[RMDB]
RNA sequence: GGGAACGACUCGAGUAGAGUCGAAAACCGUAGGACCACUACCCACCGAGUGUCCACACGUUGAAAUGUUCUUCGAAAGAGGAACAUGGAGUGUGGACCUCGAGGUGGUCCUAAACGGAAAGUAUUCCCAGUAUUCUUCGGAAUACUGGGAAUACAAGAUUCUAAACCAGUUCGCUGGUUUAGAAUCAAAAGAAACAACAACAACAAC
Reactivity to 2A3 in 0.01 (KOAc 150mM, MgCl2 10mM, bicine 150mM(pH8.5), 24C), signal-to-noise 4, nucleotides 027 to 156: c010c000g020u010a000g000g000a010c000c000a010c030u120a080c050c070c050a030c020c030g000a010g020u300g000u020c000c010a000c010a010c010g210u240u030g010a030a040a000u000g000u000u000c000u000u000c010g050a080a090a060g010a010g010g000a000a000c000a000u000g000g010a040g010u000g000u000g000g010a000c000c000u000c000g000a000g000g000u000g010g000u000c000c000u000a000a000a000c010g030g040a170a040a020g000u010a000u010u010c000c000c000a000g000u010a000u000u000c020u010u060c240g110g000a000a000u000a000c000u000g000g010g030a000a000u000a000c000a000a000
Reactivity to DMS in 0.01 (KOAc 150mM, MgCl2 10mM, bicine 150mM(pH8.5), 24C), signal-to-noise 2, nucleotides 027 to 156: c010c010g000u010a000g000g010a030c000c010a010c000u000a010c040c010c010a300c200c010g010a060g000u010g020u000c010c010a010c000a010c020g030u000u040g010a190a210a030u010g020u000u000c000u010u000c000g010a130a190a300g010a030g010g000a010a030c010a000u000g040g010a140g040u000g040u000g000g010a000c010c000u000c000g010a040g010g000u020g000g010u010c010c000u000a000a010a070c070g010g010a110a080a130g010u000a020u000u000c000c010c000a020g020u000a010u000u000c010u000u000c300g010g020a020a010u000a010c000u000g000g000g020a010a000u000a010c000a110a170